[RMDB]
RNA sequence: GGGAACGACUCGAGUAGAGUCGAAAACGCUGGGUAAAUGCUGGGACAUGUCGGUCCUGAAGCGCGCACGGGAUCCGACAACAGCCCAGCCGCUUUACCUGUGCUGAAGCGCGCACGGCAACCGAAAGGUGCGAAAACGGGCACUUUCGAGUGCCCGGGCUGAAAUGAGUUUCGACUCAUUUCAGCCAAAAGAAACAACAACAACAAC
Reactivity to 2A3 in 0.01 (KOAc 150mM, MgCl2 10mM, bicine 150mM(pH8.5), 24C), signal-to-noise 2, nucleotides 027 to 156: c040g000c020u070g000g010g020u000a000a020a020u220g020c010u010g000g000g050a040c060a170u180g020u000c000g000g010u000c000c000u020g060a130a040g060c050g020c010g000c030a020c020g020g010g010a080u300c120c010g000a000c020a110a030c050a030g060c000c000c010a000g000c010c010g030c000u000u000u000a000c000c000u000g060u080g000c050u110g040a160a040g000c000g000c010g020c000a010c020g020g000c040a110a080c020c010g030a090a020a030g020g010u030g030c010g010a060a040a000a090c020g000g010g030c030a000c040u040u050u090c240g060a000g000u010g000c000c000c010g000
The data come from the RNA Mapping Database (RMDB), library RNAMAK. Structure probing data (2A3) for a 207-nucleotide construct. Conditions: 150 mM KOAc, 10 mM MgCl2 and 150 mM bicine (pH 8.5), 24 C. Reactivities are given for positions 27 through 156.